[RMDB]
RNA sequence: GGGAACGACUCGAGUAGAGUCGAAAAACAGUUACAGCCGAGUUAGUAUUGCUGGAUGACUACCCACAUAUAAAGGAGCACGCCGUAUGCAGGAUAGACUCGGUCGAGACUGCACUGGUGCUGGUAAGGUACUCGAUGGAUUCGUCCAUCGAGUACCAAAAGAAACAACAACAACAAC
Reactivity to 2A3 in 0.01 (KOAc 150mM, MgCl2 10mM, bicine 150mM(pH8.5), 24C), signal-to-noise 1, nucleotides 027 to 126: a010c010a000g030u030u000a000c000a000g000c000c000g040a060g010u140u080a030g040u110a060u090u180g020c020u010g000g100a090u100g030a030c000u150a230c000c140c000a000c050a040u300a010u090a080a220a000g080g000a010g040c020a020c100g030c040c000g130u120a040u070g000c000a000g040g000a060u020a020g050a000c000u000c130g000g020u050c030g010a030g050a030c000u010g030c010a020c040u070g040g010u060g060c000u060g000g120u080a140a010
Reactivity to DMS in 0.01 (KOAc 150mM, MgCl2 10mM, bicine 150mM(pH8.5), 24C), signal-to-noise 1, nucleotides 027 to 126: a110c110a030g000u000u030a130c180a130g030c040c050g040a130g000u000u000a090g000u000a110u000u010g030c000u010g000g010a070u010g010a050c010u040a130c000c000c030a160c240a090u010a190u010a070a140a050g030g000a000g000c070a020c110g030c010c040g000u030a090u000g000c000a000g000g000a010u000a240g000a010c000u000c110g010g010u000c000g000a250g010a020c000u010g010c040a080c140u020g010g010u000g000c050u000g000g010u000a070a060
An RNA of 177 nucleotides, treated with 2A3 and DMS and read out base by base.
It was measured as part of the RMDB library OK2TST.
For 2A3 the reverse transcriptase was SuperScript II with manganese.
For DMS, 729 sequencing reads were counted.